[RMDB]
The data come from the RNA Mapping Database (RMDB), libraries RFM100 and RFMREP. The record gives the reactivity of an RNA of 177 nucleotides to 2A3 and DMS. The RNA was probed in 150 mM KOAc, 10 mM MgCl2 and 150 mM bicine (pH 8.5) at 24 C.
RNA sequence: GGGAACGACUCGAGUAGAGUCGAAAAGGAUUGAUCCGUAUAAUUUUGAUGCGAAAGCAUAGAGAGGUGCAGUGUUACUCUUCAUCACGGAUUUUGUGAACGGAGAGUGUCAAGCGCUUCCCACAAUGAUUACUUCAAGGUUCGCCUUGAAGUAAUCAAAAGAAACAACAACAACAAC
Reactivity to 2A3 in 0.01 (KOAc 150mM, MgCl2 10mM, bicine 150mM(pH8.5), 24C), signal-to-noise 9, nucleotides 027 to 126: g070g040a080u170u230g060a070u100c030c010g050u110a130u070a180a190u090u180u140u190g110a030u020g010c000g040a130a030a030g000c010a020u060a050g090a000g000a010g060g000u030g000c020a040g070u000g050u130u070a010c000u000c000u000u000c010a020u020c000a010c020g170g030a140u090u090u200u300g020u000g010a090a040c080g000g000a000g000a000g010u010g010u010c020a030a030g010c000g000c000u010u000c020c020c000a060c030a040a110u100
Reactivity to DMS in 0.01 (KOAc 150mM, MgCl2 10mM, bicine 150mM(pH8.5), 24C), signal-to-noise 4, nucleotides 027 to 126: g000g010a100u000u000g000a100u000c010c030g000u000a090u030a090a110u000u010u010u000g020a030u000g000c000g000a150a080a120g010c010a030u000a110g000a050g000a030g010g020u000g010c010a150g000u010g010u010u010a000c000u000c000u000u000c020a080u000c010a010c000g000g000a190u010u030u030u030g010u000g000a010a070c140g020g000a010g010a030g000u000g000u000c050a110a120g010c000g010c040u010u000c000c000c020a100c230a060a070u020
For 2A3 the reverse transcriptase was SuperScript II with manganese.